[RMDB]
RNA sequence: GGGAACGACUCGAGUAGAGUCGAAAACGCGCAGCCUUGUACCGUUCAGACCGACAGCAAAGACUUCGGGACAGGCCCACCGCACCUUCAGCGCCGACAAGUAGUCUUCCGUCAGCACCCAUGGCCUGCCCAUUGAUAAUUCCUGGGGCCAUCCAUGACUGUAGGAAAGAUUCGUCUUUCCUACAGUAAAAGAAACAACAACAACAAC
Reactivity to DMS in 0.01 (KOAc 150mM, MgCl2 10mM, bicine 150mM(pH8.5), 24C), signal-to-noise 2, nucleotides 027 to 156: c070g020c010g030c030a080g040c010c020u010u000g010u000a060c040c020g050u020u000c000a170g020a130c090c020g000a150c050a130g020c060a110a090a100g000a080c060u000u000c040g010g000g000a060c040a080g010g000c000c030c050a110c060c030g030c030a060c040c020u000u000c030a120g030c060g030c050c040g010a120c040a080a080g000u010a070g010u000c030u010u020c020c060g000u010c030a070g040c030a090c040c000c030a100u000g010g000c050c010u000g000c030c000c010a120u000u030g000a100u010a050a130u010u010c030c040u010g000g000g010g020c020c000a120u000c040c010a080u000g010
Reactivity to 2A3 in 0.01 (KOAc 150mM, MgCl2 10mM, bicine 150mM(pH8.5), 24C), signal-to-noise 5, nucleotides 027 to 156: c060g020c010g030c020a020g030c010c020u110u130g030u060a060c030c030g040u060u100c050a040g060a120c020c050g030a060c060a070g060c070a070a140a050g050a110c050u110u090c120g020g000g040a040c020a030g050g000c000c010c000a030c020c020g000c010a070c020c010u090u090c050a050g030c010g000c060c020g030a030c030a110a030g030u090a020g010u060c000u080u040c030c010g040u050c010a010g010c030a090c010c020c010a040u050g010g000c000c020u020g000c040c020c000a040u060u110g020a020u040a220a080u180u070c040c050u040g000g000g000g010c010c010a030u040c020c000a040u130g040
The record gives the reactivity of an RNA of 207 nucleotides to DMS and 2A3. For 2A3 the reverse transcriptase was SuperScript II with manganese. The DMS profile rests on 4,959 reads. The data come from the RNA Mapping Database (RMDB), library OK3TST. Values cover nucleotides 27 to 156.